An RNA of 177 nucleotides, treated with DMS and 2A3 and read out base by base. For DMS the reverse transcriptase was MarathonRT. Reactivities are given for positions 27 through 126. The 2A3 profile rests on 1,949 reads. It was measured as part of the RMDB library OK2TRN. Reactivities are rounded to 0.1 and cut off at 0 and 3.
RNA sequence: GGGAACGACUCGAGUAGAGUCGAAAAUGCCGCAGUGGAUGCGUUGUGUGAGGUGAGUGCGGUGGACACGCUGCUGUCCAACUUCAUCCGCCCGCUGCAGGGGGGUGCCAUCGCCACUCCGGUGCUGCACUGCACCCAAUUUCGAUUGGGUGCAGUGAAAAGAAACAACAACAACAAC
Reactivity to DMS in 0.01 (KOAc 150mM, MgCl2 10mM, bicine 150mM(pH8.5), 24C), signal-to-noise 4, nucleotides 027 to 126: u010g020c020c040g020c120a010g030u000g010g010a090u000g020c070g020u000u000g020u000g020u000g000a100g000g020u010g000a080g020u010g010c100g010g020u000g010g000a040c070a030c050g010c200u000g000c140u000g000u000c020c020a060a070c030u000u010c030a030u000c030c020g000c010c020c020g000c060u000g000c050a130g010g010g010g010g010g010u000g000c050c080a060u010c080g010c090c020a050c030u010c090c030g000g010u010g010c090u000g000
Reactivity to 2A3 in 0.01 (KOAc 150mM, MgCl2 10mM, bicine 150mM(pH8.5), 24C), signal-to-noise 2, nucleotides 027 to 126: u070g000c010c000g000c010a020g040u020g040g090a120u130g020c040g130u180u180g060u080g010u010g070a090g060g000u000g060a090g050u160g010c060g010g010u010g030g020a050c030a020c080g290c130u180g010c050u040g060u000c030c000a070a070c020u070u060c030a000u020c000c000g020c000c000c010g000c050u050g000c040a090g000g000g000g010g000g010u040g040c010c010a100u100c040g020c060c010a060c030u030c050c020g000g010u100g010c000u030g000